Structure probing data (2A3 and DMS) for a 177-nucleotide construct. DMS adducts were read by reverse transcription with MarathonRT.
RNA sequence: GGGAACGACUCGAGUAGAGUCGAAAAUGGCGGCUUGCUGCCGGCCUGGGGAGGCACCGGGCACCGGCACACUCGGCACUCGGGAAGUUUGCUCGUUACCAGCGCAGGGUGACUCCAGGCCGCGGUGCCGACCCAGGUGGUUCGCCACCUGGGUCGGAAAAGAAACAACAACAACAAC
Reactivity to 2A3 in 0.01 (KOAc 150mM, MgCl2 10mM, bicine 150mM(pH8.5), 24C), signal-to-noise 2, nucleotides 027 to 126: u090g090g000c040g010g010c040u080u100g000c030u060g040c050c020g030g000c000c000u020g010g000g000g010a130g130g050c080a050c040c030g000g020g030c060a100c080c000g000g030c050a010c000a010c030u030c040g010g000c010a010c050u050c100g070g000g000a060a110g060u120u170u150g090c220u040c020g090u100u110a080c020c030a030g000c010g000c030a030g050g000g020u000g040a050c010u000c070c000a010g000g060c030c000g010c000g050g010u020g000
Reactivity to DMS in 0.01 (KOAc 150mM, MgCl2 10mM, bicine 150mM(pH8.5), 24C), signal-to-noise 3, nucleotides 027 to 126: u010g020g030c000g000g000c090u010u010g040c130u000g020c040c030g000g000c020c000u000g010g000g010g010a230g020g020c040a050c010c000g000g000g010c030a060c100c050g000g020c300a170c030a030c020u000c020g010g010c000a040c010u000c190g000g010g000a090a220g000u000u000u030g020c090u020c060g000u000u000a230c020c010a010g010c030g020c010a050g000g000g000u000g000a160c120u010c030c030a020g000g010c030c020g010c010g020g000u000g000
Source: RMDB library OK2TRN, as collected in RNAgym. High 2A3 reactivity points to a flexible backbone, as in loops and unpaired stretches. Values cover nucleotides 27 to 126.